An RNA of 177 nucleotides, treated with DMS and 2A3 and read out base by base.
DMS adducts were read by reverse transcription with MarathonRT.
The reactions ran in a buffer of 150 mM KOAc, 10 mM MgCl2 and 150 mM bicine (pH 8.5), at 24 C.
It was measured as part of the RMDB library OK1LIB.

RNA sequence: GGGAACGACUCGAGUAGAGUCGAAAAAGAGCAUUGGCAACUCAGAGCCCUUAUUCUAGAAUCGGUGAUGAGUCAGGGAAAGAAGGACUCAGGCAGAAAGGAUGGACAAUAACUACUGUAUGCGACACACAGCACUUAAGUUCGCUUAAGUGCUGUGAAAAGAAACAACAACAACAAC
Reactivity to DMS in 0.01 (KOAc 150mM, MgCl2 10mM, bicine 150mM(pH8.5), 24C), signal-to-noise 5, nucleotides 027 to 126: a040g000a070g010c060a080u010u010g010g000c070a120a060c080u010c040a010g000a240g010c010c000c030u010u020a070u000u030c100u010a080g020a100a080u030c240g010g010u020g020a140u010g000a020g010u000c030a110g020g000g010a040a050a120g020a130a060g000g000a030c080u010c060a010g000g020c050a030g010a030a040a070g010g010a070u010g010g010a070c080a050a090u030a020a070c040u010a040c040u000g000u010a050u030g010c030g010a120c180a140
Reactivity to 2A3 in 0.01 (KOAc 150mM, MgCl2 10mM, bicine 150mM(pH8.5), 24C), signal-to-noise 7, nucleotides 027 to 126: a000g110a020g020c070a070u100u140g030g010c050a080a060c060u050c090a020g000a050g080c000c010c010u030u090a140u090u050c070u090a070g080a120a110u090c070g040g000u080g020a100u020g010a000g050u040c030a040g030g040g070a060a110a070g090a050a050g070g000a020c010u010c050a010g030g020c000a000g070a040a060a000g050g010a030u050g010g030a030c010a030a080u150a130a030c080u140a020c020u060g020u060a100u120g010c030g020a000c000a000